Overview: Structure probing data (DMS and 2A3) for a 177-nucleotide construct. For 2A3 the reverse transcriptase was SuperScript II with manganese. Source: RMDB library OK2TST, as collected in RNAgym.

RNA sequence: GGGAACGACUCGAGUAGAGUCGAAAACAUACCCCGGAGCAUGCUGACCCUGUCCUGGCCUUCCUUGGGGGCCCAGUAUGUUGCAGAAGCCGAGGAGAAGCUGCAGCGAGCCCGGCUGCUCGUGGAGCCUACAGCGUUAGUUCGCUAACGCUGUAGGAAAAGAAACAACAACAACAAC
Reactivity to DMS in 0.01 (KOAc 150mM, MgCl2 10mM, bicine 150mM(pH8.5), 24C), signal-to-noise 3, nucleotides 027 to 126: c130a140u010a210c030c010c020c050g010g020a070g030c020a030u000g000c020u000g020a190c090c050c040u000g010u000c060c030u000g010g010c020c020u000u000c010c030u000u020g010g000g000g000g010c030c030c070a040g020u000a060u000g010u010u000g010c070a080g010a160a150g000c020c020g010a090g010g000a110g010a130a130g000c030u000g020c030a090g000c010g020a080g010c040c050c050g000g010c030u000g010c000u000c040g020u000g000g040a120g010
Reactivity to 2A3 in 0.01 (KOAc 150mM, MgCl2 10mM, bicine 150mM(pH8.5), 24C), signal-to-noise 1, nucleotides 027 to 126: c040a030u180a140c000c040c000c020g060g000a010g010c040a020u070g020c020u030g040a070c010c040c000u040g080u070c020c030u020g000g020c010c010u050u040c020c030u010u050g030g010g020g000g030c000c010c000a000g000u030a020u120g030u010u090g040c020a040g010a170a010g000c000c020g040a040g030g040a050g020a090a000g070c050u050g000c000a000g030c010g030a010g000c020c020c000g060g040c040u040g000c000u020c030g020u060g010g030a000g110
For 2A3, 1,729 sequencing reads were counted.